[RMDB]
RNA sequence: GGGAACGACUCGAGUAGAGUCGAAAAUCCCUCUCAAGAGGGAGCUCGGGGACCAGAAACGACACUCGCGCGCUUUAGGGACCGGAGAGCUGGCACACGACCGCAGGGCGACCUGCGCGAUGCCCACCUUGGAUGACCGUUUCGACGGUCAUCCAAGAAAAGAAACAACAACAACAAC
Reactivity to 2A3 in 0.01 (KOAc 150mM, MgCl2 10mM, bicine 150mM(pH8.5), 24C), signal-to-noise 2, nucleotides 027 to 126: u010c000c030c000u040c020u000c040a110a120g010a000g000g010g000a000g000c000u000c000g040g010g020g010a040c030c000a010g110a020a100a020c030g120a040c040a010c130u220c040g090c060g000c010g000c070u060u040u150a080g010g030g010a070c000c000g050g110a140g000a020g060c050u070g010g050c010a030c010a010c030g030a050c020c010g000c000a010g010g000g000c000g050a050c000c000u000g000c040g000c010g000a010u060g020c000c000c000a070c020
Reactivity to DMS in 0.01 (KOAc 150mM, MgCl2 10mM, bicine 150mM(pH8.5), 24C), signal-to-noise 2, nucleotides 027 to 126: u000c000c000c000u000c030u030c160a140a090g000a060g010g000g000a030g000c000u000c030g050g010g000g020a140c200c010a280g000a000a170a070c010g060a080c120a220c280u110c100g050c070g010c010g000c060u000u000u010a210g000g000g020a000c030c030g040g050a100g010a120g030c000u000g000g040c030a000c070a030c010g000a190c300c060g000c010a050g020g000g000c140g000a150c000c000u000g000c000g000c050g010a000u000g000c000c000c160a080c230
This 177-nucleotide RNA was probed chemically with 2A3 and DMS. For 2A3 the reverse transcriptase was SuperScript II with manganese. The reactions ran in a buffer of 150 mM KOAc, 10 mM MgCl2 and 150 mM bicine (pH 8.5), at 24 C.